The record gives the reactivity of an RNA of 207 nucleotides to 2A3. The data come from the RNA Mapping Database (RMDB), library OK3TST.
RNA sequence: GGGAACGACUCGAGUAGAGUCGAAAAGCAGCCUUUGCCGCAGUGUUGCAAAUAUUUGGCCGAUUCUCUGGCGCUCUAUUUGCUAUACGCCAACGACGAAAACUAUGAUCCUAACAAAACGCGCCACGUCCUCGACAAUGCUAUUGAAGUGGACGACCCCUCUGACUCAUUUCGAUGAGUCAGAGGGAAAAGAAACAACAACAACAAC
Reactivity to 2A3 in 0.01 (KOAc 150mM, MgCl2 10mM, bicine 150mM(pH8.5), 24C), signal-to-noise 2, nucleotides 027 to 156: g060c060a010g030c010c000u110u050u080g060c010c030g040c120a080g000u000g000u060u050g000c000a000a020a010u130a040u080u000u000g050g000c020c040g200a240u240u050c130u030c160u150g000g030c090g110c030u020c010u040a080u040u030u000g010c000u020a030u000a060c030g000c050c010a120a040c080g060a000c010g090a010a000a090a050c060u050a070u220g010a070u060c000c030u110a140a030c070a050a050a010a030c060g040c040g070c030c030a070c030g000u000c000c020u000c000g030a010c060a060a000u200g230c030u090a090u150u070g010a090a020g000u030g000g000a010c010g050a040c000